Structure probing data (DMS) for a 177-nucleotide construct.
Conditions: 150 mM KOAc, 10 mM MgCl2 and 150 mM bicine (pH 8.5), 24 C.
DMS adducts were read by reverse transcription with MarathonRT.
RNA sequence: GGGAACGACUCGAGUAGAGUCGAAAAGCAAGAUGCUUCGGCAUCUUGCAGUCGUAGCGCGAUCGACAGAAUUACAGCUAUGUCGAACGAGGAAGAGCCCGCACAUCAUCCCUUUCGAGGGAUGAAAGGUGUAUUCCGUUUUCGAACGGAAUACACCAAAAGAAACAACAACAACAAC
Reactivity to DMS in 0.01 (KOAc 150mM, MgCl2 10mM, bicine 150mM(pH8.5), 24C), signal-to-noise 1, nucleotides 027 to 126: g000c000a000a000g000a000u000g020c010u000u030c180g010g010c000a010u000c010u000u030g010c010a030g000u000c030g030u000a150g020c140g010c050g000a050u000c010g020a020c090a100g000a130a140u000u010a100c300a200g010c090u050a060u000g020u000c000g040a030a080c000g000a060g000g000a140a090g000a060g000c010c010c000g000c170a110c110a110u000c000a000u000c000c000c000u000u000u070c160g010a030g020g010g030a000u000g000a010a070a060